[RMDB]
RNA sequence: GGGAACGACUCGAGUAGAGUCGAAAAUGUCCAGUCCCUCCCCGUUCCUGGAGAAGGGAGACUCGGGAACGCCUAGCAUCUGAGGGACGAAGCCGCCCCCGGGCGCUCCCCUCGGAGGUCCACUGGGACCUAUCUUAAGUUUCGACUUAAGAUAGGUAAAAGAAACAACAACAACAAC
Reactivity to DMS in 0.01 (KOAc 150mM, MgCl2 10mM, bicine 150mM(pH8.5), 24C), signal-to-noise 7, nucleotides 027 to 126: u010g020u010c010c030a110g000u010c020c010c010u000c010c030c040c010g000u000u000c010c010u010g020g010a040g010a140a090g020g010g010a100g000a090c030u000c010g000g000g010a030a040c050g010c060c060u000a100g010c100a110u000c030u000g010a040g010g000g000a150c100g010a050a290g000c060c060g000c040c020c020c110c210g010g000g020c020g010c030u000c020c010c000c020u000c010g010g010a020g000g000u010c090c130a090c040u000g000g010g000
Reactivity to 2A3 in 0.01 (KOAc 150mM, MgCl2 10mM, bicine 150mM(pH8.5), 24C), signal-to-noise 2, nucleotides 027 to 126: u080g050u020c020c010a000g080u040c010c000c000u010c010c010c000c010g010u010u000c020c000u060g180g030a030g010a100a080g130g050g020a050g050a020c010u000c010g010g010g010a010a010c020g010c000c030u040a050g030c020a060u030c030u050g010a020g010g020g010a030c020g010a030a000g030c070c030g030c010c010c000c020c030g040g020g000c040g000c000u010c000c010c000c000u010c000g010g000a010g000g020u060c040c010a020c020u020g000g000g040